[RMDB]
Conditions: 150 mM KOAc, 10 mM MgCl2 and 150 mM bicine (pH 8.5), 24 C.
An RNA of 177 nucleotides, treated with 2A3 and DMS and read out base by base.
RNA sequence: GGGAACGACUCGAGUAGAGUCGAAAAGAAACAUUAUAUGAAAGGAGAACACAUUCUGUCAGAUGGUUGAUCAGCCCGGCUUUAUUGGGUGUCUGCGUGAACAGAUCAAACAAGAUCAAGCUGAUUGCUCUUCAGUAGUGUUCGCACUACUGAAGAGAAAAGAAACAACAACAACAAC
Reactivity to 2A3 in 0.01 (KOAc 150mM, MgCl2 10mM, bicine 150mM(pH8.5), 24C), signal-to-noise 3, nucleotides 027 to 126: g000a010a090a000c020a060u140u110a130u130a060u300g070a110a020a040g100g020a080g040a090a020c110a000c010a150u130u030c040u090g030u020c020a020g030a060u080g090g100u170u100g020a080u030c030a030g010c020c000c020g070g040c040u150u120u120a100u100u130g060g000g000u040g020u000c000u020g010c050g130u090g010a090a020c010a010g020a040u080c040a010a110a020c050a090a030g040a030u070c020a030a000g010c030u030g030a090u080u210g030
Reactivity to DMS in 0.01 (KOAc 150mM, MgCl2 10mM, bicine 150mM(pH8.5), 24C), signal-to-noise 3, nucleotides 027 to 126: g010a130a050a090c050a050u000u000a070u000a150u010g010a050a070a090g020g000a090g010a090a070c170a080c120a070u000u010c050u010g010u010c040a040g010a090u010g000g000u000u010g010a080u000c030a090g010c050c060c020g020g000c120u000u000u010a070u020u020g020g010g020u010g010u000c020u010g010c040g020u020g000a110a160c010a020g020a020u020c030a060a040a090c100a060a040g010a040u010c120a040a090g010c010u000g020a100u010u000g010
For DMS the reverse transcriptase was MarathonRT. Reactivities are given for positions 27 through 126. For 2A3, 1,768 sequencing reads were counted.